Conditions: 150 mM KOAc, 10 mM MgCl2 and 150 mM bicine (pH 8.5), 24 C. This 177-nucleotide RNA was probed chemically with 2A3 and DMS. DMS adducts were read by reverse transcription with MarathonRT. The DMS profile rests on 1,246 reads. Source: RMDB library OK2TRN, as collected in RNAgym.

RNA sequence: GGGAACGACUCGAGUAGAGUCGAAAAAGUGUCUUUCACUGUACAUCAAGCUAAAAAGAGUAUGUAUACCAACUGACAUAUUUUUGAAUUUGAGGAGAAGCCAAGACCAGUAUUGCUUGAACACAACACACUUCUUUUCCUUCGGGAAAAGAAGUGUAAAAGAAACAACAACAACAAC
Reactivity to 2A3 in 0.01 (KOAc 150mM, MgCl2 10mM, bicine 150mM(pH8.5), 24C), signal-to-noise 2, nucleotides 027 to 126: a000g030u020g010u020c000u030u170u160c030a030c040u090g040u060a020c010a070u060c050a090a040g060c030u210a120a050a000a000a030g060a050g060u080a030u070g000u030a030u030a030c020c070a110a010c070u060g040a010c030a020u090a150u030u100u030u040u030g140a150a090u080u080u110g030a010g050g000a050g010a080a000g030c000c020a030a000g000a060c030c010a020g050u070a040u150u090g000c040u050u080g020a060a010c080a000c030a040a110c010
Reactivity to DMS in 0.01 (KOAc 150mM, MgCl2 10mM, bicine 150mM(pH8.5), 24C), signal-to-noise 2, nucleotides 027 to 126: a090g000u010g020u000c020u000u000u000c020a070c050u010g020u000a040c100a100u000c080a030a030g010c070u010a110a090a110a040a030g000a060g010u000a010u000g000u000a020u000a230c150c070a060a060c200u000g010a040c000a000u000a030u000u000u000u000u030g000a080a180u000u000u020g010a100g000g010a110g000a050a080g020c020c050a050a040g000a050c030c010a060g020u000a080u010u010g010c070u000u000g000a080a020c120a030c170a050a050c200